[RMDB]
RNA sequence: GGGAACGACUCGAGUAGAGUCGAAAAUCUAGUGCCUUCUGGUUAUUCACCCACAUUCCAAUGGCGGGUUUGGUACGAAUGUAUAAUUUGUUAGCAUGCCUUUGGCUUUUACGCAAGUUUUAUCAGCCCGUAAUAGUUAGUUCGCUAACUAUUACGGAAAAGAAACAACAACAACAAC
Reactivity to 2A3 in 0.01 (KOAc 150mM, MgCl2 10mM, bicine 150mM(pH8.5), 24C), signal-to-noise 4, nucleotides 027 to 126: u010c020u020a020g050u010g090c010c010u100u070c050u070g060g000u090u070a070u080u100c030a040c020c020c000a020c010a060u120u060c030c010a060a050u030g030g000c000g010g000g030u070u050u060g030g020u020a020c020g020a080a030u040g080u030a060u020a240a070u050u030u040g050u040u040a030g040c030a030u020g000c010c000u070u040u060g030g000c000u060u060u080u050a030c040g000c040a070a070g000u000u010u060u080a140u070c030a020g050c020
Reactivity to DMS in 0.01 (KOAc 150mM, MgCl2 10mM, bicine 150mM(pH8.5), 24C), signal-to-noise 7, nucleotides 027 to 126: u010c060u000a080g020u000g010c030c030u010u000c080u000g000g010u000u010a090u000u000c110a150c020c010c030a090c120a090u000u010c070c100a070a050u010g010g020c060g010g010g020u000u000u000g010g010u010a030c040g000a050a050u010g000u010a060u010a060a040u000u000u000g010u000u000a070g010c060a030u000g010c020c010u000u000u010g010g010c140u000u000u000u010a080c120g020c080a060a070g010u000u000u000u000a080u000c110a130g000c210